The record gives the reactivity of an RNA of 177 nucleotides to DMS and 2A3. 2A3 adducts were read by reverse transcription with SuperScript II with manganese. The 2A3 profile rests on 1,609 reads. The RNA was probed in 150 mM KOAc, 10 mM MgCl2 and 150 mM bicine (pH 8.5) at 24 C. High 2A3 reactivity points to a flexible backbone, as in loops and unpaired stretches.
RNA sequence: GGGAACGACUCGAGUAGAGUCGAAAACGUCAGACGACGAAGUCGGUCCAUCUGCGGUAACAGACCGACAUAGAGUUCGAAGCAGAACGCACAACCGCAGAUACACGAUUGGAGUGUGAAUGAGAGACAGCACUGAGUAGUUCGCUACUCAGUGCUGAAAAGAAACAACAACAACAAC
Reactivity to DMS in 0.01 (KOAc 150mM, MgCl2 10mM, bicine 150mM(pH8.5), 24C), signal-to-noise 2, nucleotides 027 to 126: c000g000u000c020a120g020a180c160g050a070c030g020a090a210g030u000c000g000g000u000c010c150a070u000c000u000g000c010g000g000u000a090a160c070a190g050a050c030c010g000a020c030a020u010a000g000a110g000u020u000c010g000a170a070g000c150a130g000a010a000c000g040c210a110c170a080a000c000c000g000c010a010g010a080u020a020c140a050c020g000a130u040u010g020g010a150g000u000g000u000g030a090a040u020g010a060g000a030g010a190
Reactivity to 2A3 in 0.01 (KOAc 150mM, MgCl2 10mM, bicine 150mM(pH8.5), 24C), signal-to-noise 3, nucleotides 027 to 126: c000g000u010c010a110g080a190c090g010a010c010g010a230a000g000u000c010g000g000u000c010c010a090u020c040u010g000c000g030g000u030a120a020c010a060g000a000c000c020g000a000c020a030u050a050g070a010g010u040u030c030g010a100a010g140c060a070g060a050a010c000g000c000a010c020a180a050c000c000g020c010a000g010a000u040a040c030a000c020g160a090u070u220g090g050a200g030u020g000u020g060a110a080u200g030a100g000a000g040a130